This 177-nucleotide RNA was probed chemically with DMS. The reactions ran in a buffer of 150 mM KOAc, 10 mM MgCl2 and 150 mM bicine (pH 8.5), at 24 C. For DMS, 826 sequencing reads were counted.

RNA sequence: GGGAACGACUCGAGUAGAGUCGAAAAGUUUGCAGAAAUCUCCGAGGUAAUGCCUUGAUGCCGUUCAGACAGGUGCACCGCUGACUCCCACCUGUACCCUCCACCUCCCGAGGAGAACAGAGUGCACAUACGUGACUCCUUUCGAGGAGUCACGUAUAAAAGAAACAACAACAACAAC
Reactivity to DMS in 0.01 (KOAc 150mM, MgCl2 10mM, bicine 150mM(pH8.5), 24C), signal-to-noise 1, nucleotides 027 to 126: g010u000u010u000g000c080a060g000a090a200a100u000c030u000c040c020g000a130g010g000u010a060a060u010g050c040c020u000u000g000a070u030g010c000c110g000u000u010c110a090g000a120c160a060g010g000u000g000c040a000c020c070g020c020u000g010a120c030u000c000c050c070a080c100c040u000g050u000a170c100c030c000u010c010c020a110c150c060u010c010c000c000g010a090g010g010a040g000a090a080c110a030g010a220g010u000g010c030a020c100